[RMDB]
RNA sequence: GGGAACGACUCGAGUAGAGUCGAAAAGUUGUAUACACCGGGUAGUUUCCAACUCCGGCUGGUGUGAAGAAGGAGCCGUUCCACGCAGGACACGAACAAGAAGAAGCCGAAGCAACUUCAGGUCGCCGCGCACGUACUGUCGCUCGAUCUCCGCCUCGAAGUGAAGGAAGUUCGCUUCCUUCACUUCAAAAGAAACAACAACAACAAC
Reactivity to 2A3 in 0.01 (KOAc 150mM, MgCl2 10mM, bicine 150mM(pH8.5), 24C), signal-to-noise 1, nucleotides 027 to 156: g020u000u000g000u030a070u010a140c030a010c000c000g000g010g010u040a030g060u050u190u000c030c050a040a060c050u020c050c060g020g020c030u020g020g030u080g040u100g060a120a220g030a070a020g100g010a010g040c020c000g000u100u000c020c000a020c060g020c040a070g000g090a030c050a000c150g130a110a030c060a080a040g070a000a000g040a060a000g040c090c060g050a120a020g010c050a030a070c000u090u050c050a010g030g050u000c010g060c070c040g020c020g050c060a040c050g040u110a050c040u180g120u220c030g000c010u020c020g000a050u000c040u000c040c020g050c000c010u070c220
Background:
Structure probing data (2A3) for a 207-nucleotide construct. 2A3 adducts were read by reverse transcription with SuperScript II with manganese. The reactions ran in a buffer of 150 mM KOAc, 10 mM MgCl2 and 150 mM bicine (pH 8.5), at 24 C. The 2A3 profile rests on 704 reads.